Structure probing data (2A3) for a 177-nucleotide construct. Conditions: 150 mM KOAc, 10 mM MgCl2 and 150 mM bicine (pH 8.5), 24 C.

RNA sequence: GGGAACGACUCGAGUAGAGUCGAAAAACGAGAUACUGCGUAAGCCAACGUGAAAAUAAAAUUCUGGCAAUAAUUCAAAUGCGAAUUAACGCAAACCAAAUUUUUUUUGAACGACAGUACUGUACUCCCCAACUCCGACAUUCGUGUCGGAGUUGGGAAAAGAAACAACAACAACAAC
Reactivity to 2A3 in 0.01 (KOAc 150mM, MgCl2 10mM, bicine 150mM(pH8.5), 24C), signal-to-noise 1, nucleotides 027 to 126: a010c030g020a000g000a060u000a020c000u080g000c050g190u090a050a000g130c090c030a170a000c000g050u110g030a290a000a000a000u080a000a000a000a040u110u160c190u020g000g000c130a020a000u130a190a060u260u000c130a000a030a300u090g000c000g000a000a050u280u050a080a110c000g020c180a090a040a000c050c000a060a000a020u190u000u080u000u000u000u000u130g020a050a000c080g100a080c020a000g050u020a000c030u000g060u090a080c020u000c000